[RMDB]
RNA sequence: GGGAACGACUCGAGUAGAGUCGAAAAACCAUCCUAUUCGUAGGAUGGUGCACCAUUGCCGAUUGUAUAUAAUACCGCAGGCGGAAAAGCGGUACAAAUAAGGAACUUGUCAGUUCGCUGACAAGAAGUAUCAGUUAGCAUUCGUGCUAACUGAUACAAAAGAAACAACAACAACAAC
Reactivity to DMS in 0.01 (KOAc 150mM, MgCl2 10mM, bicine 150mM(pH8.5), 24C), signal-to-noise 5, nucleotides 027 to 126: a020c000c000a000u000c000c000u000a010u000u010c170g030u000a000g010g010a010u000g010g000u000g020c140a200c030c020a110u010u010g020c010c020g000a160u000u020g020u000a080u010a070u010a110a200u000a030c010c010g040c010a120g010g020c090g010g000a080a050a070a090g000c000g020g000u000a020c160a050a060a090u010a090a150g000g010a110a140c000u000u000g010u000c000a010g010u000u010c200g000c000u000g000a010c000a010a010g020a060a090
Reactivity to 2A3 in 0.01 (KOAc 150mM, MgCl2 10mM, bicine 150mM(pH8.5), 24C), signal-to-noise 5, nucleotides 027 to 126: a000c000c000a000u000c000c000u020a020u050u110c240g070u050a000g000g000a000u000g010g000u000g000c030a050c040c010a070u050u220g060c030c010g120a120u110u090g150u060a080u010a030u020a280a140u040a040c000c010g010c040a070g130g020c000g000g050a070a140a010a010g000c000g010g010u020a040c040a020a130a030u170a100a070g070g010a040a100c010u000u000g000u000c000a010g020u030u090c210g010c090u000g000a000c000a000a000g020a020a000

The record gives the reactivity of an RNA of 177 nucleotides to DMS and 2A3. Reactivities are given for positions 27 through 126. For 2A3 the reverse transcriptase was SuperScript II with manganese. Conditions: 150 mM KOAc, 10 mM MgCl2 and 150 mM bicine (pH 8.5), 24 C.